Structure probing data (DMS and 2A3) for a 177-nucleotide construct. The DMS profile rests on 3,522 reads. Values cover nucleotides 27 to 126. The 2A3 profile rests on 767 reads. It was measured as part of the RMDB library OK2TRN. For DMS the reverse transcriptase was MarathonRT. The RNA was probed in 150 mM KOAc, 10 mM MgCl2 and 150 mM bicine (pH 8.5) at 24 C.

RNA sequence: GGGAACGACUCGAGUAGAGUCGAAAAGCCUGAGAGGGACUAAUGUUGUGCAAGUCAAGCCUUAUGAUUCUAAGCCUGCUCUCUCAGAAGAACUUGCUAUAAGUUGGAAUAUAUGUUCUGCAGGCUGCUCUUAGCAUUUCUUCGGAAAUGCUAAGAGAAAAGAAACAACAACAACAAC
Reactivity to DMS in 0.01 (KOAc 150mM, MgCl2 10mM, bicine 150mM(pH8.5), 24C), signal-to-noise 3, nucleotides 027 to 126: g010c060c010u010g000a050g020a050g000g000g010a080c050u000a110a080u010g010u010u010g010u000g020c040a060a040g010u000c060a120a120g010c080c060u000u000a090u010g000a120u000u010c070u010a100a040g010c030c010u000g010c020u000c020u000c030u000c090a070g000a140a100g010a060a020c000u000u010g010c090u000a080u020a040a050g020u010u010g010g010a060a060u000a140u000a050u020g010u010u000c010u000g000c010a020g020g010c010u000g000
Reactivity to 2A3 in 0.01 (KOAc 150mM, MgCl2 10mM, bicine 150mM(pH8.5), 24C), signal-to-noise 1, nucleotides 027 to 126: g090c000c000u010g000a060g030a000g050g080g010a010c010u060a260a000u160g020u210u030g050u110g020c040a020a040g060u070c040a000a070g100c000c060u250u180a170u170g060a110u160u060c020u090a000a030g000c000c020u020g000c010u000c020u000c020u000c020a010g000a050a010g020a020a020c000u050u050g050c090u140a080u050a300a110g140u190u110g040g070a050a000u130a020u030a020u280g020u000u080c090u030g000c000a020g010g000c010u020g000